[RMDB]
RNA sequence: GGGAACGACUCGAGUAGAGUCGAAAACACAUGCGUUAAAAGAUAUCCUUGCAGAGGGUGACAAAGUCAUUAUCAUGGGACAUAAACGUCCUGACUUAGAUGCAAUUGGUGCAGCAAUCGGUGUGUCGCUGGGAACGCGAUUCGUCGCGUUCCCAGCAAAAGAAACAACAACAACAAC
Reactivity to 2A3 in 0.01 (KOAc 150mM, MgCl2 10mM, bicine 150mM(pH8.5), 24C), signal-to-noise 2, nucleotides 027 to 126: c260a020c000a080u160g220c000g050u090u110a080a030a000a000g100a000u030a010u090c010c000u040u070g010c040a070g070a040g110g090g000u020g020a070c000a000a150a000g070u000c070a120u050u290a080u190c180a160u170g010g000g020a040c100a070u300a050a250a060c090g000u000c000c030u020g050a000c000u000u150a030g040a090u000g020c000a010a060u190u060g000g060u060g000c070a000g000c010a050a050u060c040g060g000u050g020u000g000u030c090
This 177-nucleotide RNA was probed chemically with 2A3.
The reactions ran in a buffer of 150 mM KOAc, 10 mM MgCl2 and 150 mM bicine (pH 8.5), at 24 C.